[RMDB]
RNA sequence: GGGAACGACUCGAGUAGAGUCGAAAAUCGCGUUGGAUGCCUAAUUCAAGGAAUUAGCGUGCCUUCAUGCUAAGGGUUUGAUAUCUGCUAAAACCCGGUGCAUUCAUCAAUGCAGGUUAAGCCAAAGAAACGGCUCACGAAUUCGUUCGUGAGCCAAGCUUUUAUGAUCUUUCGAGAUCAUAAAAGCAAAAGAAACAACAACAACAAC
Reactivity to 2A3 in 0.01 (KOAc 150mM, MgCl2 10mM, bicine 150mM(pH8.5), 24C), signal-to-noise 2, nucleotides 027 to 156: u080c020g020c040g020u020u040g040g010a070u030g030c000c010u020a050a050u060u030c150a250a140g140g030a050a040u000u000a020g030c050g040u080g120c020c020u050u100c040a040u040g000c010u040a030a020g000g000g010u000u000u000g060a080u050a040u090c020u060g000c020u070a000a040a020a070c000c000c000g000g030u030g000c020a080u060u170c030a050u090c080a140a090u170g010c010a010g040g020u090u260a160a070g020c050c040a100a080a060g100a050a060a020c100g010g000c000u000c000a000c000g000a020a020u050u080c150g040u070u000c010g020u000g200a000g000c000c000a000a000
Reactivity to DMS in 0.01 (KOAc 150mM, MgCl2 10mM, bicine 150mM(pH8.5), 24C), signal-to-noise 2, nucleotides 027 to 156: u000c060g000c120g010u010u000g000g010a020u000g000c000c030u020a080a080u000u000c070a100a270g020g020a100a190u000u000a040g040c020g020u000g010c050c060u000u000c030a050u000g030c030u020a300a250g000g000g010u000u000u000g000a160u000a060u000c060u020g010c090u000a130a030a020a050c000c000c010g010g060u000g010c020a010u000u000c050a120u000c070a080a130u010g020c030a030g010g000u000u000a060a080g000c010c030a040a100a160g000a080a060a180c090g020g030c000u000c000a020c020g000a020a080u000u010c210g030u010u000c030g020u000g010a020g000c000c000a000a020